[RMDB]
RNA sequence: GGGAACGACUCGAGUAGAGUCGAAAAGAUAUGGACUCGACGUCAGGCGAAGAACUACGUCGGAAACGACGUAGGGAGCCUACGUUCGAGUCCUAAGUCAAAAGAUUUGCGGUUCGCCGCAAAUCAAGAUUACAGGUUGGUUCGCCAACCUGUAAUCAAAAGAAACAACAACAACAAC
Reactivity to DMS in 0.01 (KOAc 150mM, MgCl2 10mM, bicine 150mM(pH8.5), 24C), signal-to-noise 4, nucleotides 027 to 126: g000a030u020a300u000g000g010a030c000u000c010g010a000c000g000u000c280a010g000g000c020g000a130a160g000a160a220c000u000a000c010g020u010c000g010g000a070a060a280c010g020a000c010g000u010a010g000g000g000a090g010c010c000u000a010c000g010u000u000c000g010a020g010u000c000c000u020a000a060g010u000c080a080a110a120a130g000a020u000u000u000g010c000g010g020u000u020c300g010c000c000g010c000a010a000a000u000c010a040a110
Reactivity to 2A3 in 0.01 (KOAc 150mM, MgCl2 10mM, bicine 150mM(pH8.5), 24C), signal-to-noise 2, nucleotides 027 to 126: g000a010u060a060u170g000g000a000c000u000c010g000a000c010g010u180c290a020g000g040c000g250a300a010g000a080a010c010u000a000c000g000u000c010g030g020a010a060a000c000g000a000c000g010u000a000g000g020g000a000g000c000c000u010a000c010g010u050u060c000g000a000g010u000c000c000u010a000a010g000u000c010a020a000a050a020g010a010u000u000u010g010c000g000g100u070u110c300g030c120c000g030c010a000a000a010u000c010a000a010
Annotation: This 177-nucleotide RNA was probed chemically with DMS and 2A3.